[RMDB]
RNA sequence: GGGAACGACUCGAGUAGAGUCGAAAAAGAAGGUUUCCGUCAACUCACAGACCGCUGCACUGGUCAAUUUGUUCAUGUCAUACUCAAGGACCCUUCCAUCCUUUGUAAACUUAUUGACAACGACACAAUUUACUCCUCGGUUCGCCGAGGAGUAAAUAAAAGAAACAACAACAACAAC
Reactivity to DMS in 0.01 (KOAc 150mM, MgCl2 10mM, bicine 150mM(pH8.5), 24C), signal-to-noise 2, nucleotides 027 to 126: a090g010a030a040g000g010u000u010u000c010c030g030u010c090a090a120c110u010c120a090c160a120g020a070c040c040g020c120u010g000c100a110c130u000g000g000u000c020a100a070u000u010u000g000u000u000c110a140u020g010u000c100a070u000a060c090u010c060a060a020g020g000a070c300c010c040u000u010c040c050a300u000c000c010u000u030u020g000u010a060a080a080c120u000u000a070u000u000g000a060c030a060a060c060g010a070c110a070c300a050
Reactivity to 2A3 in 0.01 (KOAc 150mM, MgCl2 10mM, bicine 150mM(pH8.5), 24C), signal-to-noise 1, nucleotides 027 to 126: a000g070a020a050g010g000u040u090u020c000c010g000u070c040a100a060c020u060c060a110c010a060g040a090c010c040g040c060u150g020c050a020c060u100g020g000u040c000a040a060u050u060u070g040u000u060c040a020u050g070u020c000a060u040a210c030u010c060a040a050g000g020a050c030c000c000u010u040c010c010a040u000c000c000u090u090u060g110u100a080a080a080c040u050u050a070u150u110g050a000c000a020a020c050g080a010c020a000c000a070